[RMDB]
RNA sequence: GGGAACGACUCGAGUAGAGUCGAAAAGCACAGAUUUGGGUCCUGACAGACUGGCCUUGUCUUUAGACUGGUCCACAGGGCGAGGCGAGAGCAGUGAUGUGCGUGUGGUGUCCAGUGACUCCACUGACCAUACCUACGUGUUCGCACGUAGGUAUGGAAAAGAAACAACAACAACAAC
Reactivity to 2A3 in 0.01 (KOAc 150mM, MgCl2 10mM, bicine 150mM(pH8.5), 24C), signal-to-noise 3, nucleotides 027 to 126: g010c020a020c010a080g070a100u100u120u210g060g030g030u000c000c010u020g090a080c010a040g070a030c010u030g060g050c010c010u020u070g010u040c000u060u130u020a100g030a080c000u030g030g000u070c050c010a040c030a040g000g000g000c030g010a030g020g000c020g040a060g010a020g020c030a000g040u040g060a120u070g040u030g010c070g020u040g010u010g000g030u040g010u000c030c070a130g040u090g140a010c010u020c050c010a030c040u050g040a030
Reactivity to DMS in 0.01 (KOAc 150mM, MgCl2 10mM, bicine 150mM(pH8.5), 24C), signal-to-noise 3, nucleotides 027 to 126: g020c020a010c050a030g000a150u010u000u010g010g020g020u000c010c010u000g000a130c230a110g010a060c030u010g010g000c020c010u000u010g020u010c070u010u010u010a090g010a070c020u000g000g000u000c020c080a140c120a040g010g000g010c020g020a050g010g010c020g010a090g010a120g030c020a080g000u000g000a120u000g020u010g010c030g020u000g030u000g000g010u000g000u020c040c150a090g010u010g010a060c030u000c020c010a040c050u000g000a210
Overview:
The record gives the reactivity of an RNA of 177 nucleotides to 2A3 and DMS. The 2A3 profile rests on 4,041 reads. For DMS, 3,747 sequencing reads were counted. Values cover nucleotides 27 to 126. The RNA was probed in 150 mM KOAc, 10 mM MgCl2 and 150 mM bicine (pH 8.5) at 24 C.